The record gives the reactivity of an RNA of 177 nucleotides to DMS and 2A3. Source: RMDB libraries RFM100 and RFMREP, as collected in RNAgym. Conditions: 150 mM KOAc, 10 mM MgCl2 and 150 mM bicine (pH 8.5), 24 C.

[RMDB]
RNA sequence: GGGAACGACUCGAGUAGAGUCGAAAAACAGGAUCGAGUCUACGGACUCGAUCCUGAAAUAAUCAACGAGAGUGUCAACCUGCCGCGAAGGUCUAUGAGUGGUCUGUUGCUCAUCUUUGUGUAGCAACUUACCUGGUGAGUUCGCUCACCAGGUAAGAAAAGAAACAACAACAACAAC
Reactivity to DMS in 0.01 (KOAc 150mM, MgCl2 10mM, bicine 150mM(pH8.5), 24C), signal-to-noise 3, nucleotides 027 to 126: a080c020a030g000g000a010u000c020g000a020g000u000c000u010a120c190g020g040a030c000u000c010g000a000u000c000c000u000g000a000a060a020u010a110a130u010c050a090a040c070g000a160g000a080g000u000g000u010c080a110a080c040c000u000g010c020c060g010c040g040a100a090g020g030u030c150u040a050u000g000a070g050u020g000g000u020c080u000g000u000u000g000c010u000c080a060u050c040u000u010u020g020u000g020u020a110g010c040a050a080
Reactivity to 2A3 in 0.01 (KOAc 150mM, MgCl2 10mM, bicine 150mM(pH8.5), 24C), signal-to-noise 3, nucleotides 027 to 126: a000c000a010g020g020a000u000c000g000a000g000u000c010u090a050c300g010g000a000c000u010c000g000a000u000c010c010u000g000a000a000a000u040a010a000u100c040a010a080c060g010a010g010a010g190u070g060u070c020a080a080c030c030u040g020c000c010g000c010g060a050a030g070g050u070c090u150a090u060g050a020g030u060g030g050u020c140u050g040u060u050g000c000u000c000a090u020c050u030u100u030g050u010g050u100a030g010c000a010a050